About this RNA: Chemical mapping of a 207-nucleotide RNA with DMS and 2A3. The RNA was probed in 150 mM KOAc, 10 mM MgCl2 and 150 mM bicine (pH 8.5) at 24 C. The DMS profile rests on 3,086 reads. Source: RMDB library M2RFPK, as collected in RNAgym.
RNA sequence: GGGAACGACUCGAGUAGAGUCGAAAAACGAGUGAGUUACGACUCACUCGACUUUUAAUGCUACCCAAAGGUCGUGACAAGUCGAUAAAACGCUGAGUCAAAAAGUCCGACGUUACGACGUCGGACAACGAGCGAGUUCUGUUCGCAGAACUCGCAACCGAAUAAAUUUGUUCGCAAAUUUAUUCGGAAAAGAAACAACAACAACAAC
Reactivity to DMS in 0.01 (KOAc 150mM, MgCl2 10mM, bicine 150mM(pH8.5), 24C), signal-to-noise 2, nucleotides 027 to 156: a100c030g030a050g030u020g020a040g030u000u000a140c220g020a180c000u000c020a020c000u000c000g030a010c030u010u000u000u000a040a060u010g010c030u000a040c000c000c000a060a090a120g020g000u000c020g020u000g010a300c040a090a180g010u000c010g020a150u000a080a050a060a100c060g010c060u000g010a150g010u010c040a060a060a100a130a130g000u010c000c000g010a030c000g010u010u000a090c160g000a120c010g000u000c000g010g010a000c000a020a000c050g010a130g000c000g000a040g060u000u000c010u010g010u000u000c280g040c010a010g020a010a010c000u010c010g040c010a010a030
Reactivity to 2A3 in 0.01 (KOAc 150mM, MgCl2 10mM, bicine 150mM(pH8.5), 24C), signal-to-noise 4, nucleotides 027 to 156: a000c030g000a010g020u020g000a010g010u030u090a080c210g050a030c060u000c000a000c000u000c000g010a010c000u070u080u020u160a140a100u170g030c010u050a080c010c000c000a070a070a030g080g020u060c050g040u030g020a030c020a050a030g030u110c030g070a070u070a160a090a030a020c020g000c060u070g030a030g030u050c050a020a020a030a090a090g000u000c000c000g000a000c000g010u000u030a070c260g010a000c010g020u010c000g020g020a000c010a000a000c020g040a010g000c010g000a000g000u000u000c000u010g040u030u040c140g010c060a000g000a000a010c010u000c000g000c000a000a000